[RMDB]
RNA sequence: GGGAACGACUCGAGUAGAGUCGAAAAGUGUAUGAGAUUACUUGACUGCUAGCCAGGGCACACAGACAGGGAGCCUAGCCCUCUUAAAGCCUCUAUCUCUCUGGCUACUCUGAUUCAGGUGCAGGUGUCCCAUUAACCGAUUCGUCGGUUAAUGGGAAAAAGAAACAACAACAACAAC
Reactivity to DMS in 0.01 (KOAc 150mM, MgCl2 10mM, bicine 150mM(pH8.5), 24C), signal-to-noise 4, nucleotides 027 to 126: g000u010g000u000a060u010g000a150g000a140u020u000a030c040u000u000g010a060c080u000g000c270u000a030g020c040c010a060g010g000g010c300a050c130a100c170a050g000a070c080a050g000g000g010a110g040c040c040u000a100g000c050c020c020u000c080u000u010a070a110a150g010c010c020u010c030u000a050u010c030u010c020u000c020u000g000g000c010u000a030c090u010c080u010g000a140u020u000c050a030g020g000u010g010c080a040g000g030u000g000
Reactivity to 2A3 in 0.01 (KOAc 150mM, MgCl2 10mM, bicine 150mM(pH8.5), 24C), signal-to-noise 1, nucleotides 027 to 126: g080u040g030u090a100u130g080a110g000a160u100u150a070c020u060u050g090a040c010u020g010c030u010a000g000c000c000a010g000g000g030c120a000c020a000c010a090g050a020c010a010g000g020g000a100g000c000c010u000a030g040c020c000c010u070c000u050u070a110a060a000g000c000c000u000c010u020a020u030c090u020c000u050c020u040g010g000c030u010a030c050u000c020u090g110a150u210u000c020a020g000g060u030g000c010a000g030g070u040g110
Structure probing data (DMS and 2A3) for a 177-nucleotide construct. Source: RMDB library OK2TRN, as collected in RNAgym.